RNA sequence: GGGAACGACUCGAGUAGAGUCGAAAAGAUAUGGAUCAUAAGGGAGGCAUUGACUCGGAAACGAGUCUAUGCCAUCGAUCUUAUGAGUCCUAAGUCAAACGAGUGGACUGUUCGCAGUCCACUCGAACACUACUUGUUGGUUCGCCAACAAGUAGUGAAAAGAAACAACAACAACAAC
Reactivity to 2A3 in 0.01 (KOAc 150mM, MgCl2 10mM, bicine 150mM(pH8.5), 24C), signal-to-noise 3, nucleotides 027 to 126: g010a000u010a010u050g000g000a000u000c000a010u010a010a010g030g000g000a020g000g000c000a000u020u060g010a000c010u010c020g010g010a010a010a000c000g010a010g020u000c010u000a000u010g010c000c000a010u040c000g000a000u000c000u010u010a000u000g030a030g120u050c000c000u000a000a000g010u010c030a070a090a080c030g000a000g010u010g010g010a010c010u030g070u130u170c300g010c180a000g000u000c010c000a000c010u000c000g000a000a000
Reactivity to DMS in 0.01 (KOAc 150mM, MgCl2 10mM, bicine 150mM(pH8.5), 24C), signal-to-noise 3, nucleotides 027 to 126: g000a010u000a010u000g000g000a070u000c000a000u000a000a020g000g010g000a010g020g020c010a020u010u000g000a010c000u010c000g030g000a010a010a030c000g000a020g000u000c000u000a010u000g020c000c010a130u000c180g000a030u000c000u010u010a000u000g000a060g010u010c000c000u000a020a090g000u000c010a090a120a180c020g000a020g030u000g000g000a020c000u000g010u000u010c220g020c010a010g010u010c000c000a000c010u000c000g000a050a140
Structure probing data (2A3 and DMS) for a 177-nucleotide construct. DMS adducts were read by reverse transcription with MarathonRT. It was measured as part of the RMDB library TTRDEL. For 2A3 the reverse transcriptase was SuperScript II with manganese.